Conditions: 150 mM KOAc, 10 mM MgCl2 and 150 mM bicine (pH 8.5), 24 C. Chemical mapping of a 177-nucleotide RNA with 2A3 and DMS. DMS adducts were read by reverse transcription with MarathonRT. It was measured as part of the RMDB library OK2TST. For 2A3 the reverse transcriptase was SuperScript II with manganese.
[RMDB]
RNA sequence: GGGAACGACUCGAGUAGAGUCGAAAACGUCUUGGGAGUUACGGACUGACUGUCGACGGGCCGAUCGGCCACAUGUGGUACAAGCUGCUGGACAAAUUUGUGUACCCCAACGACCCUCAGUGCAAUGCGACGCACAAUCAUUCGUGAUUGUGCGUCGAAAAGAAACAACAACAACAAC
Reactivity to 2A3 in 0.01 (KOAc 150mM, MgCl2 10mM, bicine 150mM(pH8.5), 24C), signal-to-noise 2, nucleotides 027 to 126: c040g010u000c040u000u090g070g010g000a110g030u150u060a010c020g090g010a050c020u030g030a030c030u060g080u050c050g090a140c070g010g050g030c020c000g210a300u170c150g080g000c000c000a030c040a140u230g000u040g010g000u020a060c000a040a080g040c000u050g030c070u080g020g000a090c000a060a190a130u110u120u000g230u040g020u040a040c000c030c020c020a020a000c060g050a060c010c010c000u060c030a050g100u080g080c030a020a130u160g060
Reactivity to DMS in 0.01 (KOAc 150mM, MgCl2 10mM, bicine 150mM(pH8.5), 24C), signal-to-noise 1, nucleotides 027 to 126: c190g000u000c030u010u070g020g020g000a110g010u030u020a040c090g010g000a010c070u000g000a170c170u000g010u020c050g010a180c150g000g010g010c000c000g020a080u000c220g020g020c000c000a040c040a080u000g020u000g000g000u000a060c110a080a120g030c070u000g010c020u000g000g010a050c050a070a030a160u020u000u000g000u000g010u000a060c000c000c000c010a060a080c120g010a080c010c040c010u010c130a150g010u020g010c070a040a050u000g030